The record gives the reactivity of an RNA of 207 nucleotides to 2A3. Source: RMDB library OK3TST, as collected in RNAgym. Conditions: 150 mM KOAc, 10 mM MgCl2 and 150 mM bicine (pH 8.5), 24 C.
RNA sequence: GGGAACGACUCGAGUAGAGUCGAAAACAGCAGCAGUAAUGGUAGAAAUUUUAUAUAGACCAACUGUUGUGGUAGUUUGAGUUACGCCACCUGAAAAUGUUGCAGUGUUUGAUGCUGGGUAUUUAAGAAUUACUACACCGCUACCACCGCUGCCUGAUCCCCAUUAAGCAUUCGUGCUUAAUGGGGAAAAAGAAACAACAACAACAAC
Reactivity to 2A3 in 0.01 (KOAc 150mM, MgCl2 10mM, bicine 150mM(pH8.5), 24C), signal-to-noise 1, nucleotides 027 to 156: c030a000g030c000a000g000c000a000g030u110a160a020u050g050g000u090a040g060a110a300a110u110u210u170u020a300u130a040u140a090g190a040c020c010a020a000c050u040g060u260u080g000u010g020g010u050a140g000u000u190u100g020a020g010u020u100a020c090g060c090c000a050c050c050u080g040a080a060a000a000u180g000u110u120g010c010a010g070u000g020u210u170u190g080a060u140g000c030u050g010g010g010u010a000u020u080u010a140a110g000a060a060u030u040a010c010u010a000c030a020c040c020g000c030u010a000c010c000a030c000c000g010c000u020g070c020c000u010g010a030